[RMDB]
RNA sequence: GGGAACGACUCGAGUAGAGUCGAAAAGAUAUGGAUCCUAAGGGAGUCUGAAGUUCGGAAACGAACUUUCCGGACAUCGAUCUUAGGAGUCCUAAGUCAAACAGGCCUCCGUUCGCGGAGGCCUGAAGUAUUGUAGACUGUUCGCAGUCUACAAUACAAAAGAAACAACAACAACAAC
Reactivity to DMS in 0.01 (KOAc 150mM, MgCl2 10mM, bicine 150mM(pH8.5), 24C), signal-to-noise 3, nucleotides 027 to 126: g000a020u000a040u010g000g000a260u000c010c000u000a000a000g010g010g010a010g010u000c000u010g000a020a010g020u000u000c000g010g000a010a000a010c010g000a020a030c000u000u000u010c300c190g030g010a010c000a300u000c170g000a000u010c000u000u000a010g000g000a020g010u010c000c000u000a000a080g000u000c010a100a070a240c010a010g010g000c000c000u010c000c000g000u000u010c230g020c010g020g010a030g000g000c000c000u010g000a010a050
Reactivity to 2A3 in 0.01 (KOAc 150mM, MgCl2 10mM, bicine 150mM(pH8.5), 24C), signal-to-noise 1, nucleotides 027 to 126: g000a000u020a000u030g000g010a000u000c010c000u000a010a000g000g010g000a010g010u000c020u050g050a000a010g000u000u010c000g020g000a010a000a000c010g010a010a000c010u030u000u020c290c060g000g000a000c000a010u300c020g000a010u020c010u000u010a000g000g040a030g020u030c000c000u000a000a000g010u010c030a070a060a070c010a010g010g010c000c010u000c020c010g060u070u090c300g010c040g080g000a000g010g000c000c000u000g000a000a000
The record gives the reactivity of an RNA of 177 nucleotides to DMS and 2A3. For 2A3 the reverse transcriptase was SuperScript II with manganese. Values are in units of 0.01, from 0 to 300, in steps of 10. Conditions: 150 mM KOAc, 10 mM MgCl2 and 150 mM bicine (pH 8.5), 24 C. For DMS, 3,285 sequencing reads were counted. The data come from the RNA Mapping Database (RMDB), library TTRDEL.